Description: The record gives the reactivity of an RNA of 177 nucleotides to 2A3 and DMS. It was measured as part of the RMDB library VIROID. The DMS profile rests on 3,238 reads. Values cover nucleotides 27 to 126. Conditions: 150 mM KOAc, 10 mM MgCl2 and 150 mM bicine (pH 8.5), 24 C.
[RMDB]
RNA sequence: GGGAACGACUCGAGUAGAGUCGAAAAGGGGUACCGGUGGAGCCAUGGGAUGCUCUUCCCGAUUCCGUCCAUCCCUCCUCCCAGGGGGUCGCCCAGGAAUGGCGGGACCCCACUUCAUCAGGGUCCGCAUCGCAUAUAUCUUCGGAUAUAUGCGAUGAAAAGAAACAACAACAACAAC
Reactivity to 2A3 in 0.01 (KOAc 150mM, MgCl2 10mM, bicine 150mM(pH8.5), 24C), signal-to-noise 3, nucleotides 027 to 126: g050g010g000g010u020a080c050c090g040g010u040g020g000a020g000c060c120a250u220g060g050g010a070u080g030c040u020c000u060u060c010c000c010g000a010u070u000c020c020g040u060c030c000a070u060c010c000c000u030c020c010u000c000c000c020a000g000g020g000g010g000u040c060g080c070c020c000a040g110g160a140a090u120g020g000c060g040g030g030a040c000c010c010c010a060c020u070u100c020a140u070c030a050g030g020g000u040c020c000g000
Reactivity to DMS in 0.01 (KOAc 150mM, MgCl2 10mM, bicine 150mM(pH8.5), 24C), signal-to-noise 4, nucleotides 027 to 126: g010g000g000g010u000a030c110c090g010g020u000g000g000a020g020c070c110a180u010g030g000g010a240u000g010c090u010c090u000u000c300c010c010g010a100u010u000c030c020g000u000c000c060a070u010c030c010c010u000c050c060u010c000c000c030a180g010g000g010g020g010u000c030g010c010c000c000a070g000g020a100a100u000g030g000c120g010g000g000a020c010c010c010c040a030c040u000u000c100a050u000c080a090g010g000g010u000c020c050g010